Chemical mapping of a 177-nucleotide RNA with 2A3 and DMS. The 2A3 profile rests on 4,512 reads. In probing experiments dimethyl sulfate is read out at A N1 and C N3, which are open when not base-paired.
RNA sequence: GGGAACGACUCGAGUAGAGUCGAAAACGUCCGAUUAAUACGAAACGGAGCUGAUAAACGAUGGAACACAUUUAUAUUCCCGGAAAAAAUAAGGAUUUAGCUCCAUUAUUACUACUUCACGGGACAAGUAGGGAUAAAUGUUCGCAUUUAUCCCUACAAAAGAAACAACAACAACAAC
Reactivity to 2A3 in 0.01 (KOAc 150mM, MgCl2 10mM, bicine 150mM(pH8.5), 24C), signal-to-noise 4, nucleotides 027 to 126: c030g040u000c010c010g010a020u060u200a110a080u160a160c060g060a050a040a000c040g010g000a030g000c020u040g040a050u100a070a140a000c050g060a050u120g020g050a100a020c080a000c020a110u050u210u070a230u100a080u110u060c000c020c010g010g030a100a110a010a000a010a010u110a060a020g040g010a010u040u030u130a020g030c030u020c000c000a000u000u010a000u010u010a010c010u000a030c020u060u050c100a090c150g060g000g010a020c010a030a060
Reactivity to DMS in 0.01 (KOAc 150mM, MgCl2 10mM, bicine 150mM(pH8.5), 24C), signal-to-noise 4, nucleotides 027 to 126: c150g010u000c010c000g000a130u000u010a090a080u000a060c150g030a100a070a100c110g010g000a020g020c040u000g010a050u010a060a050a080c120g000a100u010g000g000a060a040c090a090c090a080u030u000u010a090u010a160u010u000c000c010c010g040g000a000a030a080a070a110a090u010a030a100g010g000a060u000u000u000a050g010c070u000c010c000a070u000u010a030u000u000a070c150u010a070c100u000u000c050a090c100g010g020g000a030c290a040a100
It was measured as part of the RMDB library OK2TST. For DMS the reverse transcriptase was MarathonRT. For 2A3 the reverse transcriptase was SuperScript II with manganese. The RNA was probed in 150 mM KOAc, 10 mM MgCl2 and 150 mM bicine (pH 8.5) at 24 C.